[RMDB]
RNA sequence: GGGAACGACUCGAGUAGAGUCGAAAAGAAAGAGAGGUUUUUUGCCGUUCUCGAAAUGUGAGUUGUGUUUUAUACACUGUGUAUGAAGCGUAGAAAGAAUACGCUCACGAGAGUACGGCUAAAGAAACCCAACAAUAUAGUUCGCUAUAUUGUUGGGAAAAGAAACAACAACAACAAC
Reactivity to 2A3 in 0.01 (KOAc 150mM, MgCl2 10mM, bicine 150mM(pH8.5), 24C), signal-to-noise 9, nucleotides 027 to 126: g090a010a080a000g160a010g030a070g030g060u040u020u000u010u050u050g000c010c000g000u050u020c000u000c000g040a070a080a050u300g000u000g000a010g010u070u260g010u230g010u010u010u010u030a080u020a010c050a020c060u050g050u040g030u150a140u270g190a110a020g020c020g010u030a020g110a100a170a000g040a020a020u040a030c010g000c000u000c000a000c010g100a110g000a000g020u010a000c000g000g000c000u010a000a010a010g020a020a020a010
Reactivity to DMS in 0.01 (KOAc 150mM, MgCl2 10mM, bicine 150mM(pH8.5), 24C), signal-to-noise 9, nucleotides 027 to 126: g010a070a060a080g010a100g000a120g000g000u000u000u000u010u020u010g000c000c000g010u000u000c000u000c000g010a090a070a120u050g010u000g000a010g010u000u040g060u010g000u000u000u010u000a130u000a030c030a080c030u020g010u030g020u030a100u040g010a110a050g010c040g010u010a030g000a110a120a080g000a030a020u010a010c000g000c000u000c000a000c000g000a100g000a020g010u000a010c000g000g000c000u010a010a050a040g000a070a080a100
Structure probing data (2A3 and DMS) for a 177-nucleotide construct. The reactions ran in a buffer of 150 mM KOAc, 10 mM MgCl2 and 150 mM bicine (pH 8.5), at 24 C. 2A3 adducts were read by reverse transcription with SuperScript II with manganese.